Structure probing data (DMS and 2A3) for a 177-nucleotide construct. Reactivities are given for positions 27 through 126. The 2A3 profile rests on 5,815 reads. Conditions: 150 mM KOAc, 10 mM MgCl2 and 150 mM bicine (pH 8.5), 24 C.

RNA sequence: GGGAACGACUCGAGUAGAGUCGAAAAAAGUAACUAAAGAGGCUACGAGGAAAGAUAUCCUGAGUACCAUGCGUCAUUAUUCGCGUGGGAAUAUGGGUGGCAUGAACAUCCAACCCUAAAUAUUACUCUUCCUACUAUAGUUCGCUAUAGUAGGAAGAAAAGAAACAACAACAACAAC
Reactivity to DMS in 0.01 (KOAc 150mM, MgCl2 10mM, bicine 150mM(pH8.5), 24C), signal-to-noise 2, nucleotides 027 to 126: a060a070g020u000a060a060c070u020a060a100a090g030a160g020g010c060u000a030c140g030a080g000g000a050a120a080g000a100u010a060u000c020c000u000g000a100g000u000a150c000c000a020u020g020c000g000u000c270a090u010u000a140u010u010c020g030c020g010u000g000g020g000a090a060u010a010u010g030g010g020u000g010g000c080a080u000g010a040a030c060a050u000c030c020a060a180c040c000c000u000a070a070a070u000a130u000u000a100c140u010
Reactivity to 2A3 in 0.01 (KOAc 150mM, MgCl2 10mM, bicine 150mM(pH8.5), 24C), signal-to-noise 5, nucleotides 027 to 126: a000a000g090u070a050a010c050u060a120a060a070g130a050g060g000c010u020a020c060g050a030g050g040a100a050a020g080a090u080a040u090c010c010u030g020a010g010u000a020c000c010a000u000g000c000g030u030c070a190u060u280a110u210u070c020g000c000g010u000g010g000g070a010a050u140a100u050g010g010g010u020g000g000c090a120u160g060a080a020c010a030u030c000c010a050a120c030c000c000u030a070a080a030u170a050u080u070a050c020u000